[RMDB]
RNA sequence: GGGAACGACUCGAGUAGAGUCGAAAACAUGGUAUGGCCUCGCAUCCGGCCUACCUACAGAAUCAACAACUUAGGAUGCGGUGGGCGAGAGCCCUAAGAAGGAGUCUCCACGCCUGGGGAGCUCCGUAUGACUUAAUGUAUUACCAGGCGUAUACAACCCUAGUAGUGACUUCGGUCACUACUAGGGAAAAGAAACAACAACAACAAC
Reactivity to 2A3 in 0.01 (KOAc 150mM, MgCl2 10mM, bicine 150mM(pH8.5), 24C), signal-to-noise 1, nucleotides 027 to 156: c040a030u080g020g010u070a130u300g000g000c010c010u020c050g000c000a010u060c000c030g000g000c030c000u010a000c000c000u030a040c070a140g290a020a060u240c060a040a150c000a060a030c080u110u120a000g000g000a020u030g000c000g030g030u120g000g000g000c010g040a070g000a020g040c000c000c000u000a020a050g130a070a070g000g030a000g000u030c060u010c000c000a000c040g000c000c000u000g010g000g000g000a000g000c040u010c000c000g070u100a130u070g080a020c080u050u220a160a000u170g130u270a100u040u120a110c020c000a010g000g000c000g020u020a000u000a000c040a000a050